An RNA of 207 nucleotides, treated with 2A3 and read out base by base.
Source: RMDB library OK3TST, as collected in RNAgym.
For 2A3 the reverse transcriptase was SuperScript II with manganese.

[RMDB]
RNA sequence: GGGAACGACUCGAGUAGAGUCGAAAAAGUAAUACCAUCUAGGCUAAGCUAUUAAAAAUAUCAGUACAUCAGUAACUACUCAUUAUAUUGACCAACCAGAGCUUAUCCAUUUUUGGUCAUUCUCAUCUAGAUAUACACUUUCAGGCUAAAGAGAGAAGACGGGGUAAAUAUUCGUAUUUACCCCGUCAAAAGAAACAACAACAACAAC
Reactivity to 2A3 in 0.01 (KOAc 150mM, MgCl2 10mM, bicine 150mM(pH8.5), 24C), signal-to-noise 2, nucleotides 027 to 156: a000g110u080a010a050u030a070c040c020a030u010c010u070a070g030g000c020u010a020a020g010c020u010a050u170u190a190a120a060a040a040u130a030u120c010a010g030u050a040c010a070u110c030a060g040u050a050a020c020u050a020c010u030c030a020u060u170a120u070a050u060u140g030a020c000c040a040a000c050c030a080g010a000g110c000u080u030a000u060c030c030a210u050u040u030u050u030g000g000u010c030a020u060u000c030u000c020a120u020c040u030a000g020a080u070a060u060a190c020a050c070u100u130u180c020a000g000g000c030u130a030a130a070g070a000g150a090g180a030a230